[RMDB]
RNA sequence: GGGAACGACUCGAGUAGAGUCGAAAAUGUGUCCAAUAAAUAAGGUAGUGUCACCAGACCUUAAUGAAGAACACAGGCCAGGUGCGGUGGCUCAUGCCUGUGAUCCCAGCACUUUGGGAGGCCAAGGCUAGGGAGUUUUAUUCGUAAAACUCCCUAGAAAAGAAACAACAACAACAAC
Reactivity to 2A3 in 0.01 (KOAc 150mM, MgCl2 10mM, bicine 150mM(pH8.5), 24C), signal-to-noise 7, nucleotides 027 to 126: u180g060u020g040u040c030c030a030a090u180a120a090a060u150a070a000g050g020u040a030g050u040g050u150c040a040c050c020a020g080a080c030c010u020u060a050a040u130g060a080a180g050a140a020c060a000c010a060g080g000c050c030a020g000g030u110g090c080g010g040u030g030g000c020u020c050a070u180g040c010c020u020g000u020g000a010u010c000c000c000a010g030c050a060c050u100u130u050g040g000g010a040g030g030c030c020a060a020g050g000
Reactivity to DMS in 0.01 (KOAc 150mM, MgCl2 10mM, bicine 150mM(pH8.5), 24C), signal-to-noise 7, nucleotides 027 to 126: u010g010u010g010u010c030c050a100a090u030a070a100a100u020a040a030g000g000u010a020g010u000g000u010c020a020c030c020a100g010a040c010c000u000u000a150a120u010g020a130a140g010a090a080c180a050c040a040g000g020c090c220a030g000g020u000g010c130g000g040u010g000g010c020u000c050a040u010g000c020c010u010g000u010g000a070u010c010c000c000a110g010c100a060c050u000u000u010g010g010g010a080g010g010c080c060a060a090g000g000